[RMDB]
RNA sequence: GGGAACGACUCGAGUAGAGUCGAAAAACAGCUUUGGACAAAAGUCUAUAGCCAGUGCAUUUGAAAACUCCCCGUGCACUAGGGCUGACUGUAGCUGGGGGAAGACAGUUUACUCAUUUGCUCUCUCUUGGGCAUACGUAUUCGUACGUAUGCCCAAAAAAGAAACAACAACAACAAC
Reactivity to DMS in 0.01 (KOAc 150mM, MgCl2 10mM, bicine 150mM(pH8.5), 24C), signal-to-noise 1, nucleotides 027 to 126: a030c050a010g010c000u000u000u000g000g100a090c120a050a110a090a140g000u000c020u020a070u000a070g010c000c010a060g000u000g000c000a010u020u080u010g000a110a090a070a120c160u030c000c000c030c040g000u000g030c000a010c020u000a050g050g010g000c040u000g000a290c120u000g000u000a030g010c000u000g000g020g000g000g000a150a230g000a060c090a020g000u000u020u000a040c060u010c040a080u000u000u000g020c020u000c040u010c000u040c090
Reactivity to 2A3 in 0.01 (KOAc 150mM, MgCl2 10mM, bicine 150mM(pH8.5), 24C), signal-to-noise 2, nucleotides 027 to 126: a000c010a000g020c000u010u110u300g020g020a040c090a080a250a060a020g000u000c040u100a150u100a050g030c000c000a000g000u000g000c000a060u060u100u240g090a120a140a110a070c040u170c070c000c000c060g040u090g000c040a020c020u090a060g050g000g000c010u050g000a040c000u020g020u110a010g000c010u050g000g000g000g020g000a000a030g020a040c040a050g000u070u090u000a060c020u030c000a100u060u030u070g010c000u000c000u010c000u000c020